RNA sequence: GGGAACGACUCGAGUAGAGUCGAAAAAGAGAAGUGUCACUAGAUCUGGUCCACCUAGAGGGAAGCACGCAGCUGACCUUAAACUAUAGCUCUGACUUUUGCACUGAGACCUAUCUAGAAAGGCUAUUCUAUGCAUUUACAGGGCAAGACUCAGAAGGCAUCUAUCUUGCUUCGGCAAGAUAGAUGCAAAAGAAACAACAACAACAAC
Reactivity to 2A3 in 0.01 (KOAc 150mM, MgCl2 10mM, bicine 150mM(pH8.5), 24C), signal-to-noise 1, nucleotides 027 to 156: a000g070a050g010a090a020g010u020g050u120c030a020c160u030a000g030a030u000c090u110g060g000u010c010c010a020c050c050u050a050g060a040g010g030g010a000a000g030c000a010c150g130c100a110g000c010u000g000a020c030c000u050u090a050a140a000c050u060a040u210a190g000c000u000c020u090g250a300c020u050u120u110u070g010c060a080c120u020g000a050g010a060c000c000u010a050u020c010u020a050g130a140a070a000g100g000c000u040a100u050u020c030u030a050u150g010c000a080u060u050u100a030c000a020g000g000g030c020a040a040g050a010c010u000c050a040g020a110a030g180

The data come from the RNA Mapping Database (RMDB), library OK3TST. The record gives the reactivity of an RNA of 207 nucleotides to 2A3. For 2A3, 468 sequencing reads were counted.